Source: RMDB library TTRDEL, as collected in RNAgym. The record gives the reactivity of an RNA of 177 nucleotides to DMS.

RNA sequence: GGGAACGACUCGAGUAGAGUCGAAAAGAUAUGGAGCUGCCGAUAAGCUGCACUCGGAAACGAGUGGCAGCUUUUGACGGCAGACUCCUAAGUCAAAGGUAGCGAAGACUUCGGUCUUCGCUACCAAUCGAAUGAUCACGUUCGCGUGAUCAUUCGAAAAAGAAACAACAACAACAAC
Reactivity to DMS in 0.01 (KOAc 150mM, MgCl2 10mM, bicine 150mM(pH8.5), 24C), signal-to-noise 1, nucleotides 027 to 126: g020a020u000a300u000g000g000a000g010c000u010g010c010c010g030a130u000a020a030g020c000u000g020c000a070c000u000c020g010g000a040a020a190c030g010a010g010u000g000g030c000a000g000c000u000u000u000u010g020a130c020g030g000c010a000g020a030c000u000c000c000u000a000a080g010u000c040a070a170a130g020g000u000a010g010c000g000a000a000g000a050c000u000u010c230g030g000u000c000u000u000c000g000c000u020a000c000c070a020a000